[RMDB]
RNA sequence: GGGAACGACUCGAGUAGAGUCGAAAAGGAAAUAAAGCACAUAAUCCAGUCGCAGACGCUAAAAAUAACGCUGCGUCGCGACGGAUGUGGCAACGCACACCGAAGUGCAAACGGUAGCGUAAAAAAAGAUAUGAUACGGCUUCGGCCGUAUCAUAUCAAAAGAAACAACAACAACAAC
Reactivity to 2A3 in 0.01 (KOAc 150mM, MgCl2 10mM, bicine 150mM(pH8.5), 24C), signal-to-noise 2, nucleotides 027 to 126: g080g010a110a080a060u190a050a180a000g010c040a060c000a190u140a190a070u140c000c030a070g010u010c000g050c030a110g000a000c000g040c030u030a070a000a030a080a140u190a240a040c070g090c110u090g000c010g010u020c000g030c000g000a000c000g030g000a000u000g000u000g020g000c040a020a010c020g020c010a000c000a010c050c010g030a150a030g150u300g130c040a080a070a020c010g030g000u000a010g030c010g000u110a030a040a000a000a110a000a040
Reactivity to DMS in 0.01 (KOAc 150mM, MgCl2 10mM, bicine 150mM(pH8.5), 24C), signal-to-noise 1, nucleotides 027 to 126: g010g000a070a160a140u000a130a140a150g010c030a060c000a060u030a120a030u000c010c000a120g000u000c010g000c000a050g030a000c010g020c000u000a000a010a110a210a090u000a050a110c270g020c170u000g000c000g020u000c040g000c010g010a010c000g000g000a040u000g000u030g000g030c040a020a020c030g000c000a020c130a110c000c000g000a070a060g100u000g000c150a000a070a060c020g020g000u000a030g010c000g030u000a000a000a000a150a080a070a080